[RMDB]
This 177-nucleotide RNA was probed chemically with DMS and 2A3.

RNA sequence: GGGAACGACUCGAGUAGAGUCGAAAAAUGACUUAUCCAUAAACUAACCCUUAGGGGUGAUUUGUUUUACUAAAAUCAAUUUACUUUAUAUGGGAAUUAAACUUUAACUAGCACAAUAGACUAAAUACCACUAGUACUAGUUCGCUAGUACUAGUGGAAAAGAAACAACAACAACAAC
Reactivity to DMS in 0.01 (KOAc 150mM, MgCl2 10mM, bicine 150mM(pH8.5), 24C), signal-to-noise 1, nucleotides 027 to 126: a090u010g000a030c150u010u000a070u000c060c020a130u010a060a100a110c060u020a170a040c000c010c000u000u000a070g060g000g000g010u020g000a080u020u000u010g000u000u000u000u000a110c150u040a040a030a040a020u000c030a060a080u000u000u040a020c020u010u000u030a030u010a010u040g000g020g020a170a100u000u000a020a040a130c070u000u010u020a030a040c030u020a020g030c040a100c190a020a070u060a010g000a050c020u010a010a060a050u040a260
Reactivity to 2A3 in 0.01 (KOAc 150mM, MgCl2 10mM, bicine 150mM(pH8.5), 24C), signal-to-noise 5, nucleotides 027 to 126: a010u120g020a030c070u140u120a040u110c040c000a050u180a100a100a050c060u040a040a080c030c000c000u020u060a070g000g000g000g040u010g010a020u000u040u060g070u010u030u010u100a150c100u150a070a100a070a070u030c020a010a040u040u040u060a060c000u050u100u090a260u110a020u130g020g010g020a070a030u120u060a130a040a040c010u060u060u090a120a060c080u070a060g040c050a020c050a190a200u100a120g090a040c050u120a060a060a060u080a080
Description:
DMS adducts were read by reverse transcription with MarathonRT. 2A3 is a SHAPE reagent: it acylates the 2'-hydroxyl of flexible nucleotides of all four kinds. 2A3 adducts were read by reverse transcription with SuperScript II with manganese. High DMS reactivity at an A or C suggests that its Watson-Crick edge is free. Conditions: 150 mM KOAc, 10 mM MgCl2 and 150 mM bicine (pH 8.5), 24 C.